An RNA of 177 nucleotides, treated with 2A3 and DMS and read out base by base. For DMS the reverse transcriptase was MarathonRT. It was measured as part of the RMDB library OK2TST. For 2A3, 1,660 sequencing reads were counted. The DMS profile rests on 1,200 reads. The reactions ran in a buffer of 150 mM KOAc, 10 mM MgCl2 and 150 mM bicine (pH 8.5), at 24 C. Values cover nucleotides 27 to 126.
[RMDB]
RNA sequence: GGGAACGACUCGAGUAGAGUCGAAAAAUCCUGAAUGCUGUGCCAUCGGAAAGCGACUGGAAUCGAGAACUUAUCGAUGGAUUUGUUCAAGGAUUCGCUGAUUUUCUGCUUUUCCUGCAGCAUCUGACCUGGUAUCAGCAUUCGUGCUGAUACCAGGAAAAGAAACAACAACAACAAC
Reactivity to 2A3 in 0.01 (KOAc 150mM, MgCl2 10mM, bicine 150mM(pH8.5), 24C), signal-to-noise 2, nucleotides 027 to 126: a000u020c000c000u020g040a040a030u030g000c000u000g010u010g040c020c110a190u170c090g000g000a000a010a010g000c010g030a040c010u030g050g020a010a040u000c000g020a020g000a150a000c000u000u010a020u030c020g240a290u210g150g000a000u080u040u020g030u030u010c030a090a050g220g010a030u000u030c060g040c150u040g110a220u060u110u130u020c090u170g010c010u100u060u010u000c000c020u040g040c000a000g000c020a000u020c070u050g050a050
Reactivity to DMS in 0.01 (KOAc 150mM, MgCl2 10mM, bicine 150mM(pH8.5), 24C), signal-to-noise 1, nucleotides 027 to 126: a070u010c000c000u010g020a060a040u010g020c030u000g020u000g030c160c150a080u010c180g020g010a010a010a040g040c000g010a140c060u010g010g000a020a010u000c010g030a300g000a020a030c050u000u000a010u000c000g000a150u010g000g000a010u000u000u010g020u000u000c080a070a220g000g000a050u000u000c000g010c080u000g000a130u010u000u000u000c060u070g000c010u000u000u000u000c000c080u000g000c040a020g000c030a050u000c090u000g000a240